Structure probing data (2A3 and DMS) for a 177-nucleotide construct. Conditions: 150 mM KOAc, 10 mM MgCl2 and 150 mM bicine (pH 8.5), 24 C. The DMS profile rests on 96,429 reads. 2A3 adducts were read by reverse transcription with SuperScript II with manganese. For 2A3, 156,829 sequencing reads were counted. The data come from the RNA Mapping Database (RMDB), library OK2TRN.

[RMDB]
RNA sequence: GGGAACGACUCGAGUAGAGUCGAAAAGGAUGCUACGUAGUUAUAUUGACAGCUACCUCUUGUGCAGUUACACAUUGUCAAUCGAAAUGCGAUCGUAACUGCACAUCGCGUUUCGACAUCCAUAUCGCUACUAGAUAGAAUUCGUUCUGUCUAGUAGAAAAGAAACAACAACAACAAC
Reactivity to 2A3 in 0.01 (KOAc 150mM, MgCl2 10mM, bicine 150mM(pH8.5), 24C), signal-to-noise 9, nucleotides 027 to 126: g020g000a010u030g010c040u050a050c070g020u010a010g020u090u040a150u050a090u190u230g100a050c050a040g000c000u010a020c000c020u070c040u040u030g000u000g000c000a000g000u010u020a020c060a010c030a060u060u120g140u220c050a090a130u110c070g090a040a020a050u070g010c020g010a020u050c060g000u000a010a010c010u010g000c000a000c000a000u000c010g000c010g010u010u010u060c030g010a030c010a010u000c010c000a030u040a030u080c070g010
Reactivity to DMS in 0.01 (KOAc 150mM, MgCl2 10mM, bicine 150mM(pH8.5), 24C), signal-to-noise 9, nucleotides 027 to 126: g000g010a040u000g010c050u000a080c150g010u000a030g010u000u000a110u010a240u010u010g010a110c180a060g000c020u000a060c030c080u000c060u000u000g020u000g010c000a020g010u000u000a020c020a090c170a040u000u000g000u010c070a050a080u010c250g000a050a020a070u000g010c040g010a030u000c130g010u000a010a020c030u000g000c020a010c010a000u000c060g000c110g010u000u000u000c020g010a090c050a030u000c010c010a090u000a090u000c110g010